RNA sequence: GGGAACGACUCGAGUAGAGUCGAAAACGACCUUAAACAGUUCUGGUGGUGCUCUGAAUGGAGUGCUCUACUGAGAUUAUAAAAUAGAAGGUAAGCUAUUAUCUCUUAGAACAGGGCAGGGCUUGUUAAAAGCCUUUCAGUUUCGACUGAAAGGCAAGAUUAGUGAUACCUUCGGGUAUCACUAAUCAAAAGAAACAACAACAACAAC
Reactivity to 2A3 in 0.01 (KOAc 150mM, MgCl2 10mM, bicine 150mM(pH8.5), 24C), signal-to-noise 3, nucleotides 027 to 156: c040g060a070c000c010u110u260a110a090a030c030a040g010u050u030c020u030g150g030u070g040g030u040g020c030u000c010u080g290a170a100u300g030g000a030g010u040g010c020u000c020u030a040c030u020g010a000g000a040u050u110a060u190a180a090a060a030u060a030g070a130a000g150g040u180a060a020g020c010u000a030u050u010a010u070c010u000c000u010u060a000g020a090a020c020a050g010g080g000c000a010g020g020g000c010u050u100g030u050u060a050a180a060a020g000c000c000u000u000u000c010a010g000u020u030u190c170g100a010c000u000g000a000a000a000g010g000c010a000a000
Reactivity to DMS in 0.01 (KOAc 150mM, MgCl2 10mM, bicine 150mM(pH8.5), 24C), signal-to-noise 1, nucleotides 027 to 156: c010g010a290c060c000u000u010a060a060a130c020a110g000u010u000c010u000g010g030u010g020g000u000g000c000u010c000u030g000a140a200u000g000g000a070g010u000g000c000u010c040u000a050c080u030g010a070g000a100u010u000a130u050a110a090a090a110u000a040g000a070a030g030g070u000a010a110g020c080u000a060u000u010a050u000c000u010c010u010u000a040g010a090a050c030a070g000g000g020c030a060g000g000g000c030u010u010g030u000u010a070a050a070a120g020c000c000u000u010u000c010a000g010u010u000u020c290g030a070c000u030g000a040a010a010g000g020c010a010a010